[RMDB]
An RNA of 207 nucleotides, treated with DMS and 2A3 and read out base by base. For 2A3 the reverse transcriptase was SuperScript II with manganese. As a SHAPE reagent, 2A3 marks flexible, mostly unpaired nucleotides at the ribose 2'-OH. Reactivities are given for positions 27 through 156. Conditions: 150 mM KOAc, 10 mM MgCl2 and 150 mM bicine (pH 8.5), 24 C.
RNA sequence: GGGAACGACUCGAGUAGAGUCGAAAAGAAACAGGAUCGACAAGGGUGUAAAGAUCGCUCUUUUACUCUGCAUGAUACCACCGUUAUCGGGUCAACAGAGUAGUUGCAAAUGACAACAAUGCUCAGGAAGGGGUAGCACCGUUCGCGGUGCUACCAAGAAGUAAAUCUGAUUCGUCAGAUUUACUUCAAAAGAAACAACAACAACAAC
Reactivity to DMS in 0.01 (KOAc 150mM, MgCl2 10mM, bicine 150mM(pH8.5), 24C), signal-to-noise 5, nucleotides 027 to 156: g000a100a080a090c050a130g010g010a080u000c030g010a100c060a090a060g020g030g030u000g010u000a070a070a100g010a100u000c070g010c080u000c010u000u000u000u000a020c010u000c000u000g000c030a150u000g020a150u000a100c050c030a300c030c060g000u000u010a100u000c060g020g010g010u000c010a050a040c030a050g000a030g020u000a050g020u000u000g000c020a060a080a130u000g010a130c030a050a070c040a060a080u000g000c020u000c030a100g010g010a100a100g010g010g010g030u010a010g010c010a010c000c000g030u000u010c300g020c030g010g030u010g000c000u000a010c000c010a010a020
Reactivity to 2A3 in 0.01 (KOAc 150mM, MgCl2 10mM, bicine 150mM(pH8.5), 24C), signal-to-noise 9, nucleotides 027 to 156: g030a010a090a000c040a040g030g040a050u060c030g040a030c080a050a070g010g050g020u060g030u120a090a090a010g060a070u110c040g010c040u020c010u030u080u010u010a010c010u000c000u010g020c110a100u090g050a030u180a300c010c040a040c040c050g130u100u120a100u300c070g000g000g010u030c020a010a010c010a040g010a000g000u020a030g010u020u050g010c030a050a100a200u150g040a090c010a030a000c010a030a130u100g020c020u040c060a020g070g070a050a040g060g070g000g000u000a000g000c000a010c000c000g020u050u060c120g010c010g090g000u000g010c000u000a000c000c000a000a010